[RMDB]
RNA sequence: GGGAACGACUCGAGUAGAGUCGAAAAAUGAACGUGGUGGGCGUAAGUUAGUAGAAGAUCUAAUGGUACGCGGUGGGUUUUCGAGUGUACUCGAAACCACCACCACCACCAAGUCGUUCCCACCGAACGUGCAAUUACCAUUCGUGGUAAUUGCACGAAAAGAAACAACAACAACAAC
Reactivity to 2A3 in 0.01 (KOAc 150mM, MgCl2 10mM, bicine 150mM(pH8.5), 24C), signal-to-noise 2, nucleotides 027 to 126: a000u130g010a120a020c060g010u000g000g000u000g000g070g000c000g020u000a060a060g000u010u000a010g020u030a050g020a300a010g030a100u050c000u020a000a010u040g270g020u060a010c020g010c010g010g000u040g050g110g020u050u100u000u030c010g000a000g000u150g090u130a160c010u000c000g010a000a000a000c000c000a000c010c010a000c000c000a000c010c000a000c010c000a000a040g010u000c010g010u000u000c050c000c000a010c030c030g060a060a060
Reactivity to DMS in 0.01 (KOAc 150mM, MgCl2 10mM, bicine 150mM(pH8.5), 24C), signal-to-noise 1, nucleotides 027 to 126: a140u010g190a170a040c130g000u000g020g030u020g000g030g000c000g000u000a090a180g000u000u000a020g000u000a140g000a140a210g000a050u010c010u000a000a000u000g030g050u000a060c010g000c050g070g000u020g000g020g050u040u000u000u000c020g000a000g000u000g030u010a060c000u000c000g000a000a010a040c000c000a010c000c060a300c020c060a140c030c010a090c020c060a050a220g000u000c000g000u000u000c010c000c020a070c230c130g010a060a130
Conditions: 150 mM KOAc, 10 mM MgCl2 and 150 mM bicine (pH 8.5), 24 C. This 177-nucleotide RNA was probed chemically with 2A3 and DMS. It was measured as part of the RMDB library M2PK90. 2A3 adducts were read by reverse transcription with SuperScript II with manganese. The 2A3 profile rests on 2,557 reads. DMS adducts were read by reverse transcription with MarathonRT. For DMS, 634 sequencing reads were counted.